The record gives the reactivity of an RNA of 170 nucleotides to DMS and 2A3. Conditions: 150 mM KOAc, 10 mM MgCl2 and 150 mM bicine (pH 8.5), 24 C. For DMS, 108,468 sequencing reads were counted. For 2A3 the reverse transcriptase was SuperScript II with manganese. Values cover nucleotides 27 to 129. For 2A3, 100,717 sequencing reads were counted.

RNA sequence: GGGAACGACUCGAGUAGAGUCGAAAACAUGCAUCAAAUGGAACUUGCUAAUGGUACACAUACCGGUUCAGCAUUUGAUGGUACUAUGUAUGGUGCCUUUAUGGAUAAACAAGUGCACCAAGUUCAGCUACUUACUAGUUCGCUAGUAAGAAAAGAAACAACAACAACAAC
Reactivity to DMS in 0.01 (KOAc 150mM, MgCl2 10mM, bicine 150mM(pH8.5), 24C), signal-to-noise 9, nucleotides 027 to 129: c060a070u060g020c000a010u000c010a000a010a010u010g000g000a030a020c040u000u030g060c190u020a100a060u000g020g040u040a110c250a100c120a110u000a050c150c120g010g010u020u010c000a100g020c030a050u010u000u000g000a020u010g000g010u050a060c100u020a030u020g000u020a090u010g000g000u000g020c000c030u000u000u000a110u040g030g020a110u080a060a080a110c190a040a010g000u030g030c000a000c010c010a030a060g000u020u030c060a110g000c070u050a080
Reactivity to 2A3 in 0.01 (KOAc 150mM, MgCl2 10mM, bicine 150mM(pH8.5), 24C), signal-to-noise 9, nucleotides 027 to 129: c020a010u090g000c000a000u000c010a010a000a000u010g020g010a010a010c000u060u110g050c050u200a150a090u110g020g060u190a080c170a010c010a150u090a030c010c020g010g020u020u020c040a140g050c000a080u010u000u000g000a000u000g000g010u050a090c070u080a030u110g070u020a080u080g010g000u010g000c000c000u050u060u030a210u170g250g030a140u220a110a080a030c070a040a020g030u070g140c010a000c000c000a010a020g010u020u040c040a030g030c020u040a030